This 177-nucleotide RNA was probed chemically with DMS and 2A3. The reactions ran in a buffer of 150 mM KOAc, 10 mM MgCl2 and 150 mM bicine (pH 8.5), at 24 C. Source: RMDB library OK1LIB, as collected in RNAgym. For 2A3, 77,800 sequencing reads were counted. Values are in units of 0.01, from 0 to 300, in steps of 10. 2A3 adducts were read by reverse transcription with SuperScript II with manganese.
RNA sequence: GGGAACGACUCGAGUAGAGUCGAAAAUAGGGCUACCGCAACCCGUCGUCGGCGCGCCCCGGCGUGACCGGCCUCGUGUGGUUGAGCCACUGGCCGAACCCGCACGCCGUACCCGGCAGACAGUCCACGGUGAUCACAUGUUCGCAUGUGAUUACUGAAAAGAAACAACAACAACAAC
Reactivity to DMS in 0.01 (KOAc 150mM, MgCl2 10mM, bicine 150mM(pH8.5), 24C), signal-to-noise 9, nucleotides 027 to 126: u030a090g000g010g020c020u010a080c130c050g020c070a080a110c040c040c030g020u010c110g020u010c020g000g010c060g010c080g000c030c030c080c070g000g010c010g000u010g000a120c090c010g010g000c010c010u020c130g010u020g020u010g000g010u010u030g010a170g010c020c010a040c020u010g000g010c000c010g000a100a120c050c070c120g000c030a040c030g000c030c010g010u010a090c060c040c020g010g010c050a090g000a080c060a080g010u010c020c050a200
Reactivity to 2A3 in 0.01 (KOAc 150mM, MgCl2 10mM, bicine 150mM(pH8.5), 24C), signal-to-noise 9, nucleotides 027 to 126: u160a040g030g000g000c020u060a070c050c040g040c060a060a080c020c020c010g030u030c020g010u010c010g020g010c030g000c010g020c070c010c010c020g020g000c000g000u020g020a140c030c010g000g010c000c010u150c080g190u140g020u050g050g020u060u230g080a050g100c000c000a030c020u020g010g000c000c000g020a070a070c030c020c030g020c010a010c010g000c000c000g010u040a070c000c010c000g010g010c020a040g020a080c020a020g050u030c030c020a060